[RMDB]
RNA sequence: GGGAACGACUCGAGUAGAGUCGAAAACAACGGCGGCGUGCAGCAUAUUGCGAUUAGCAGCGGGGCUGAUGUGGUGGUUAACGCUCAGCGUGUCACUAUUAAUGCGCCAGAAACGACAGUGACGGGCAAGCUACUGGUGCAAGGGCAACUCACCUACUAGGAUACAUAACUUCGGUUAUGUAUCCUAAAAAGAAACAACAACAACAAC
Reactivity to 2A3 in 0.01 (KOAc 150mM, MgCl2 10mM, bicine 150mM(pH8.5), 24C), signal-to-noise 4, nucleotides 027 to 156: c030a030a060c020g030g000c030g000g010c020g010u060g020c030a010g000c020a040u050a090u100u140g050c090g110a130u110u130a040g030c060a000g000c030g010g000g010g000c020u040g020a070u080g040u050g020g010u040g000g030u080u090a080a020c040g020c010u060c110a030g030c020g090u030g030u030c000a000c040u030a060u130u130a180a050u110g020c020g010c010c020a010g050a060a090a020c070g060a030c030a060g030u030g030a020c060g030g060g010c020a030a020g040c020u090a060c030u050g000g010u000g000c030a030a040g000g000g000c010a040a020c040u010c020a090c000c000u050a060c020
Reactivity to DMS in 0.01 (KOAc 150mM, MgCl2 10mM, bicine 150mM(pH8.5), 24C), signal-to-noise 2, nucleotides 027 to 156: c040a060a080c040g000g030c010g010g020c040g020u000g040c060a050g010c070a080u020a060u000u000g020c010g010a160u010u000a120g050c030a080g040c060g010g000g030g050c020u000g000a130u010g030u000g000g000u000g000g000u000u010a090a060c030g040c030u010c060a110g010c060g030u000g040u000c020a040c040u000a120u000u020a050a130u010g020c010g000c030c020a170g010a060a070a060c060g000a060c070a030g020u000g000a030c040g000g030g030c050a090a060g010c010u010a120c040u000g010g040u010g010c050a050a120g010g010g000c030a060a060c110u000c030a070c010c000u010a100c150